[RMDB]
RNA sequence: GGGAACGACUCGAGUAGAGUCGAAAAAAAGGAGGAGCGGGGGGACUUGGAACACGAGGGGACCAGUCCAGUCCGUGGGAACUACCCCGGAACUCCCGCUCUCCACACUCCUUCCCCCCGCGGGCCCAACGGGCGUCCUUCGGGACGCCCAAAAGAAACAACAACAACAAC
Reactivity to DMS in 0.01 (KOAc 150mM, MgCl2 10mM, bicine 150mM(pH8.5), 24C), signal-to-noise 2, nucleotides 027 to 129: a090a010a250g050g000a030g090g010a120g070c000g020g040g030g000g000g000a000c260u040u060g030g000a000a140c060a120c220g030a090g090g000g000g010a090c040c050a050g000u020c000c150a030g020u000c000c090g080u080g030g090g000a020a100c220u230a130c020c000c040c000g050g000a040a280c220u000c020c060c040g020c060u000c000u030c000c020a020c130a080c000u000c000c080u020u010c020c000c030c010c060c000g000c150g000g070g030c030c000c000a110a040c160
Reactivity to 2A3 in 0.01 (KOAc 150mM, MgCl2 10mM, bicine 150mM(pH8.5), 24C), signal-to-noise 2, nucleotides 027 to 129: a000a000a000g060g050a030g020g000a020g000c000g040g000g000g010g000g000a000c030u010u090g000g010a180a000c020a030c040g060a140g020g040g000g030a010c030c030a010g030u000c020c050a000g000u030c000c000g020u280g030g000g000a020a100c120u300a190c000c000c000c000g010g000a000a010c000u040c030c000c000g020c000u000c030u020c000c000a010c000a000c010u000c000c000u010u020c000c000c020c000c000c000g000c000g010g010g010c000c020c000a040a000c040